[RMDB]
Structure probing data (DMS and 2A3) for a 207-nucleotide construct. DMS adducts were read by reverse transcription with MarathonRT. The RNA was probed in 150 mM KOAc, 10 mM MgCl2 and 150 mM bicine (pH 8.5) at 24 C. The 2A3 profile rests on 2,088 reads.
RNA sequence: GGGAACGACUCGAGUAGAGUCGAAAAUGUGUAUCUCGUUUCGAUGAGGUAAUUAUGCCAAAUCACACCGAUCGAGUUUUAACAAAAAGUGCUAUUUGCGAUUGCUUUGAAAAAUCCACGCGGCGACAGCGAUCGUAUCAACUUCGUUUUGGCAGACCAAUUCGAGUAGGUUCGCCUACUCGAAUUGAAAAGAAACAACAACAACAAC
Reactivity to DMS in 0.01 (KOAc 150mM, MgCl2 10mM, bicine 150mM(pH8.5), 24C), signal-to-noise 2, nucleotides 027 to 156: u000g000u030g010u020a010u000c020u000c010g040u010u000u010c040g000a030u000g010a150g020g000u000a040a150u020u000a080u010g020c010c070a060a090a040u020c060a150c050a070c040c010g050a040u000c020g010a100g000u000u000u000u000a040a140c120a040a050a100a140a100g000u000g030c070u000a080u000u000u000g010c020g000a150u000u000g040c020u000u030u000g000a020a050a080a060a130u010c040c020a140c050g020c030g040g020c040g020a080c100a060g010c050g010a040u000c070g000u020a130u000c080a070a080c040u010u000c070g040u000u000u000u000g000g020c010a070g030a100c190
Reactivity to 2A3 in 0.01 (KOAc 150mM, MgCl2 10mM, bicine 150mM(pH8.5), 24C), signal-to-noise 4, nucleotides 027 to 156: u140g050u030g020u050a040u040c030u010c000g030u000u130u120c150g030a060u070g020a060g060g040u050a080a110u200u130a100u240g000c010c020a060a010a030u130c060a050c020a010c060c040g020a040u040c030g000a020g040u060u040u040u140a120a050c120a070a090a020a020a030g080u040g030c010u050a110u180u150u060g000c010g020a010u000u040g030c020u050u080u100g090a090a060a020a030a070u050c070c030a080c090g090c100g020g060c040g030a030c070a010g010c000g010a010u000c000g000u050a040u100c030a030a070c010u140u090c110g030u010u040u050u020g020g000c020a000g010a030c050